Annotation: The record gives the reactivity of an RNA of 177 nucleotides to 2A3 and DMS. The reactions ran in a buffer of 150 mM KOAc, 10 mM MgCl2 and 150 mM bicine (pH 8.5), at 24 C. Reactivities are given for positions 27 through 126. The 2A3 profile rests on 2,365 reads. For 2A3 the reverse transcriptase was SuperScript II with manganese. For DMS, 9,983 sequencing reads were counted.
RNA sequence: GGGAACGACUCGAGUAGAGUCGAAAAAUGAGGUCGUACAAUGUGUUGUCAAAUUUUGGGGGUUUAUGACGGUAUGUACGACCUAGAGUAUGUUAGUGAAAAACCCCCAAAAUACUGGCAUACUCAAGGUUGACGGAGAUUUCGAUCUUCGUCAACCAAAAGAAACAACAACAACAAC
Reactivity to 2A3 in 0.01 (KOAc 150mM, MgCl2 10mM, bicine 150mM(pH8.5), 24C), signal-to-noise 3, nucleotides 027 to 126: a020u180g060a020g000g000u000c000g000u010a000c020a070a100u120g120u040g070u210u100g000u040c010a050a160a180u030u040u020u060g000g000g000g000g000u040u010u000a080u050g010a010c030g060g000u170a050u020g000u000a000c000g010a000c000c000u010a010g000a000g000u000a000u000g000u000u000a000g030u070g160a000a000a000a000a050c000c000c000c000c010a010a000a000a010u030a000c000u000g010g000c000a000u010a000c000u000c000a000a020
Reactivity to DMS in 0.01 (KOAc 150mM, MgCl2 10mM, bicine 150mM(pH8.5), 24C), signal-to-noise 3, nucleotides 027 to 126: a080u030g000a020g030g010u000c000g020u020a010c000a040a060u020g000u020g020u030u020g010u010c080a050a080a190u010u020u010u010g000g010g010g000g010u000u000u010a020u020g010a060c080g010g020u020a060u010g010u000a000c000g000a010c000c010u000a000g000a010g010u000a000u000g000u000u000a000g010u010g040a070a040a010a010a030c010c010c000c000c010a020a020a040a060u060a010c020u000g000g000c000a000u000a000c000u000c000a090a090